About this RNA:
Structure probing data (DMS) for a 177-nucleotide construct. The RNA was probed in 150 mM KOAc, 10 mM MgCl2 and 150 mM bicine (pH 8.5) at 24 C. It was measured as part of the RMDB library OK2TRN. Reactivities are given for positions 27 through 126.
RNA sequence: GGGAACGACUCGAGUAGAGUCGAAAAAAGGCGCUGAUGGGGAUGAAGUCGAUUGCUUCGUCGGUCCGAAUCUGGGAUCCAAACGGGUCUUCGUCGUCAACCAGGUGAACAAGGAAGGUCAGUUUGAACCCCUCUAUCAUUUCGAUGAUAGAGGGGUAAAAGAAACAACAACAACAAC
Reactivity to DMS in 0.01 (KOAc 150mM, MgCl2 10mM, bicine 150mM(pH8.5), 24C), signal-to-noise 3, nucleotides 027 to 126: a070a090g010g030c080g060c050u010g000a070u010g010g000g000g000a060u000g010a050a050g020u010c080g020a090u020u010g020c040u000u000c040g020u000c060g020g020u000c010c010g010a100a090u010c090u010g000g000g010a090u000c040c030a030a080a070c100g020g000g000u000c020u000u000c050g010u000c070g010u010c090a060a090c070c020a080g010g000u000g000a060a070c080a040a100g000g020a060a020g000g000u000c050a050g000u000u000u000g010a140